RNA sequence: GGGAACGACUCGAGUAGAGUCGAAAAUUUUGGGUGCUGAUAGUGUGUUCCAUCUUAGUCCUUGUCCACAUAUUUACAUCUUUUUUUAACCCAGUUAUCAUAGGCCUGCCUUACUUAGUGUAUUUUGUAUGACACAUCUGAGGAUGAUUUAAGUUUACAUCAAAAUCCGAUUCGUCGGAUUUUGAUGAAAAGAAACAACAACAACAAC
Reactivity to 2A3 in 0.01 (KOAc 150mM, MgCl2 10mM, bicine 150mM(pH8.5), 24C), signal-to-noise 2, nucleotides 027 to 156: u060u040u020u040g050g000g000u030g000c030u040g030a090u050a120g040u050g010u010g020u140u000c000c010a060u030c030u040u070a040g020u010c020c000u050u060g040u050c080c070a050c020a020u150a020u110u090u060a050c060a100u060c000u050u170u030u080u040u070u130a060a060c010c010c040a040g060u070u060a070u170c070a100u040a070g040g010c030c040u020g000c020c030u040u060a030c010u020u070a040g020u040g030u040a090u040u140u030u070g070u030a050u130g010a000c010a000c010a060u000c020u030g060a070g010g040a030u080g010a050u140u120u090a120a020g040u070u080u130a040